[RMDB]
RNA sequence: GGGAACGACUCGAGUAGAGUCGAAAAAAUUAGAGGCAAUUUGAAAUAAUUUAAAUUAGCUCAACCCUACUGCACUUACCGAACAAGAUAACGGUGUAGUAGGGGUAAAUUCUCCGCAUUCGGUGCGCAACCACCUGAGGUUUCGACCUCAGGUGAACUUUAGAUAUAAGUUCGCUUAUAUCUAAAGAAAAGAAACAACAACAACAAC
Reactivity to DMS in 0.01 (KOAc 150mM, MgCl2 10mM, bicine 150mM(pH8.5), 24C), signal-to-noise 1, nucleotides 027 to 156: a060a060u000u010a100g000a070g020g020c000a100a020u000u000u000g020a040a120a210u020a210a200u030u000u000a060a000a040u000u000a140g040c000u000c000a110a050c020c010c000u000a000c010u020g000c000a000c020u000u000a060c060c030g000a100a280c160a150a130g000a090u010a040a080c160g020g040u000g010u000a020g040u000a000g020g000g000g000u000a000a010a130u000u010c070u000c020c020g000c010a130u000u020c080g000g030u020g010c030g000c130a040a070c130c000a040c010c000u000g000a020g020g000u000u000u020c190g010a030c010c000u000c020a000g000g000u000g000a000a030
Reactivity to 2A3 in 0.01 (KOAc 150mM, MgCl2 10mM, bicine 150mM(pH8.5), 24C), signal-to-noise 2, nucleotides 027 to 156: a000a000u160u110a070g000a070g090g090c010a020a010u040u010u030g070a080a090a080u300a100a160u240u080u070a010a020a000u060u030a030g000c020u000c010a010a000c000c000c000u000a000c000u000g010c000a000c000u030u060a040c070c000g070a120a010c010a010a080g100a160u120a180a040c070g000g000u000g000u000a000g010u000a000g000g000g000g000u000a010a010a000u030u000c030u000c000c010g000c020a030u020u040c010g110g000u030g030c020g010c030a080a100c060c010a010c000c000u000g000a000g030g030u040u030u210c190g090a030c010c000u000c000a000g010g000u000g010a000a000